[RMDB]
RNA sequence: GGGAACGACUCGAGUAGAGUCGAAAAGAAACUGAAUGGGGACGUGGUGGUGAAAUGCAACACCUCGGAGCAGCGAGUGACCUGGACACAGAAUGGGGAGCCAGAGCCCAUGGCCGAAUUUGUGGCCUAAUUUAUAUGGGUUCGCCCAUAUAAAUUAAAAAGAAACAACAACAACAAC
Reactivity to 2A3 in 0.01 (KOAc 150mM, MgCl2 10mM, bicine 150mM(pH8.5), 24C), signal-to-noise 2, nucleotides 027 to 126: g040a000a040a010c050u080g020a140a050u150g010g000g030g000a010c020g020u050g020g060u040g000g030u060g070a110a100a030u200g000c030a000a030c020a020c040c030u060c030g030g030a040g030c040a000g040c020g070a040g040u060g040a010c020c000u020g030g040a030c050a000c000a100g200a140a040u150g030g020g010g010a030g030c020c030a020g010a030g050c040c010c000a030u020g000g000c020c010g040a080a090u180u120u140g190u120g000g000c010c000
Reactivity to DMS in 0.01 (KOAc 150mM, MgCl2 10mM, bicine 150mM(pH8.5), 24C), signal-to-noise 6, nucleotides 027 to 126: g000a090a110a130c060u000g000a070a090u000g000g010g020g010a100c050g020u000g000g030u000g000g010u000g010a070a080a080u010g010c080a080a080c060a060c060c020u000c060g010g000a140g010c050a050g010c060g000a080g020u000g000a100c060c030u000g010g010a090c080a060c090a060g010a060a060u000g010g000g010g000a130g010c030c030a040g000a120g020c010c020c020a090u010g000g010c000c020g010a080a130u000u000u000g020u000g010g010c000c040